[RMDB]
RNA sequence: GGGAACGACUCGAGUAGAGUCGAAAAGCGUCAGAGUAUAGUGCUCGGAGUGUGAAGUAGGCAGUCGCUCCGCCCCUUGUGGGCGUGAUUCCAUUGGCCCCGUAUGGGGCAAACUGUCGAAAAUGAGCAUGAUCCGGCGUUUCGACGCCGGAUCAUGAAAAGAAACAACAACAACAAC
Reactivity to DMS in 0.01 (KOAc 150mM, MgCl2 10mM, bicine 150mM(pH8.5), 24C), signal-to-noise 1, nucleotides 027 to 126: g030c080g030u000c070a150g030a080g000u000a080u000a130g000u000g000c000u000c030g000g040a150g040u020g020u010g000a100a110g020u000a070g000g000c010a040g000u000c110g000c260u000c030c000g000c010c000c000c010u010u010g020u010g010g000g020c000g050u000g010a050u010u010c070c180a190u010u050g030g000c000c000c000c000g000u000a040u010g010g010g050g030c000a000a040a050c040u000g000u000c000g000a110a070a140a080u010g030a090g010
Conditions: 150 mM KOAc, 10 mM MgCl2 and 150 mM bicine (pH 8.5), 24 C. Structure probing data (DMS) for a 177-nucleotide construct. For DMS, 911 sequencing reads were counted. DMS adducts were read by reverse transcription with MarathonRT.